Structure probing data (2A3 and DMS) for a 177-nucleotide construct.
[RMDB]
RNA sequence: GGGAACGACUCGAGUAGAGUCGAAAAACUUUUAAUAGAGGGAGGGGAGUUUCACCCCUCUGAUUUAGCGGUUCUUGUCUUUAUCAUUCUUGUGUAUUGUUGUCAGCGCUACUACAAGAGUGAUAAUAGAAUGAAAUUGUUUCGACAAUUUCAUUCUAAAAGAAACAACAACAACAAC
Reactivity to 2A3 in 0.01 (KOAc 150mM, MgCl2 10mM, bicine 150mM(pH8.5), 24C), signal-to-noise 5, nucleotides 027 to 126: a010c050u110u100u060u150a170a180u170a130g070a080g020g050g010a010g040g020g060g010a070g070u050u180u200c120a160c010c000c000c000u000c000u000g000a010u010u090u130a060g020c090g040g000u010u040c050u060u140g080u030c030u020u050u000a000u000c000a000u000u010c000u000u020g010u000g010u020a030u050u090g080u040u060g230u140c040a020g030c040g020c050u010a010c000u010a000c020a000a000g010a000g000u000g000a000u000a000a000u000
Reactivity to DMS in 0.01 (KOAc 150mM, MgCl2 10mM, bicine 150mM(pH8.5), 24C), signal-to-noise 2, nucleotides 027 to 126: a080c030u010u000u000u010a060a120u010a120g020a110g000g000g000a020g020g000g000g020a140g000u010u020u030c190a130c020c000c000c000u000c000u000g000a090u010u000u010a070g020c250g010g020u000u000c070u020u010g010u010c090u010u000u010a010u000c000a010u000u000c000u000u010g000u010g000u000a010u010u010g010u000u020g020u010c290a090g000c030g000c100u000a010c020u010a010c020a000a010g000a020g020u000g000a020u000a000a070u000
Conditions: 150 mM KOAc, 10 mM MgCl2 and 150 mM bicine (pH 8.5), 24 C.
For DMS the reverse transcriptase was MarathonRT.